[RMDB]
RNA sequence: GGGAACGACUCGAGUAGAGUCGAAAAAUUCGCCGAGAAGCCUCUGUUCGAAAUCAUCGGGAGUGAUCCAGAUGACGGUCCUGCCAUGAGACCGCAACGAGAGCAUGCCGCAUCGAAUGGACUCGGGUAUACUAGGUGACGUUCGCGUCACCUAGAAGACAGGAACUGCUUUCGAGCAGUUCCUGUCAAAAGAAACAACAACAACAAC
Reactivity to 2A3 in 0.01 (KOAc 150mM, MgCl2 10mM, bicine 150mM(pH8.5), 24C), signal-to-noise 2, nucleotides 027 to 156: a040u060u070c060g040c020c010g030a010g050a040a000g000c010c030u080c100u110g000u020u000c030g010a120a100a010u040c030a000u040c000g000g000g000a080g060u080g070a160u030c000c000a010g020a090u030g010a060c030g000g000u000c000c010u030g280c090c020a150u130g030a140g000a180c010c020g000c100a100a070c060g060a000g000a000g170c000a030u010g020c000c000g110c060a060u110c060g050a010a050u110g020g060a060c000u010c010g060g020g010u060a050u020a200c010u000a000g000g030u000g000a000c000g000u000u090c190g020c000g150u000c030a000c000c000u000a000g000a010a000